[RMDB]
RNA sequence: GGGAACGACUCGAGUAGAGUCGAAAAGGGACUGGCCCGAUGAAGCCCGGCAACCUAACUUUAUUUAAGCGUAAAGUGAAGGGGCUAAUUCCAGCAAAAUGGUGUAUUCCGUUUUGGUAGAUAAGAGAAGCGUGACAUGAGUUCGCUCAUGUCACAAGCGAUCAUUAUUCUUCGGAAUAAUGAUCGCAAAAGAAACAACAACAACAAC
Reactivity to 2A3 in 0.01 (KOAc 150mM, MgCl2 10mM, bicine 150mM(pH8.5), 24C), signal-to-noise 3, nucleotides 027 to 156: g010g000g000a010c030u030g040g020c030c000c000g020a030u080g050a030a050g030c010c020c000g000g010c040a080a070c000c010u030a010a010c010u030u020u020a050u070u140u110a170a070g130c050g040u000a020a010a010g000u020g070a080a030g000g000g000g010c000u010a000a070u100u030c010c010a020g020c030a060a000a010a010u030g000g010u090g050u170a120u170u090c010c020g000u000u010u030u010g060g040u080a110g050a230u150a220a100g050a020g050a120a020g100c030g050u000g010a000c000a000u000g000a000g020u060u140c180g040c040u010c000a000u000g000u010c000a000c000a010a000
Reactivity to DMS in 0.01 (KOAc 150mM, MgCl2 10mM, bicine 150mM(pH8.5), 24C), signal-to-noise 2, nucleotides 027 to 156: g000g010g010a160c010u000g000g030c000c000c030g010a160u010g020a120a120g000c000c020c040g000g020c030a100a040c010c020u000a130a020c000u000u000u010a020u020u000u010a070a230g010c300g000u000a020a000a020g000u010g020a110a070g000g020g010g030c020u010a070a170u010u000c000c000a090g000c010a030a020a030a040u000g000g000u000g020u010a090u000u000c020c000g030u000u000u000u000g010g030u000a020g010a060u010a110a160g010a180g000a110a110g000c100g000u000g010a030c000a000u010g000a020g030u010u000c300g000c020u020c010a000u000g010u000c000a000c000a010a090

Structure probing data (2A3 and DMS) for a 207-nucleotide construct. Conditions: 150 mM KOAc, 10 mM MgCl2 and 150 mM bicine (pH 8.5), 24 C. For 2A3, 2,574 sequencing reads were counted.